[RMDB]
RNA sequence: GGGAACGACUCGAGUAGAGUCGAAAAGAUAUGGACGUGAACUACAGCUCCGAAGAGCAUCGAUCUCGGAAACGAGGGAGCUUGUAGAGCUGCACGUCCUAAGUCAAAAUCUGCGUUCGCGCAGAAAGUACGUUCUUAGGUUCGCCUAAGAACGUACAAAAGAAACAACAACAACAAC
Reactivity to DMS in 0.01 (KOAc 150mM, MgCl2 10mM, bicine 150mM(pH8.5), 24C), signal-to-noise 4, nucleotides 027 to 126: g000a030u010a300u000g000g000a010c010g020u000g000a140a060c040u030a300c010a000g000c010u000c020c060g000a110a130g000a000g000c010a200u000c140g000a040u010c010u010c000g010g000a080a090a200c000g000a020g000g010g020a030g020c000u010u000g000u010a120g000a010g000c020u000g020c010a020c000g000u000c000c010u000a000a070g000u000c020a110a120a070a120u000c010u000g000c010g010u000u010c200g030c010g000c000a000g020a010a030a090
Reactivity to 2A3 in 0.01 (KOAc 150mM, MgCl2 10mM, bicine 150mM(pH8.5), 24C), signal-to-noise 5, nucleotides 027 to 126: g010a020u080a040u110g000g000a000c010g000u010g000a080a040c090u230a070c280a000g000c010u060c070c070g150a240a070g000a010g040c040a130u300c050g080a150u030c010u000c000g010g060a080a080a060c020g010a020g000g020g000a020g000c000u020u070g090u140a030g000a010g000c010u040g000c000a010c000g010u000c000c000u010a020a000g000u030c000a010a020a020a300u020c010u000g020c020g030u060u110c300g000c010g000c120a000g010a020a020a000
The data come from the RNA Mapping Database (RMDB), library TTRDEL. An RNA of 177 nucleotides, treated with DMS and 2A3 and read out base by base. For 2A3, 8,188 sequencing reads were counted. As a SHAPE reagent, 2A3 marks flexible, mostly unpaired nucleotides at the ribose 2'-OH.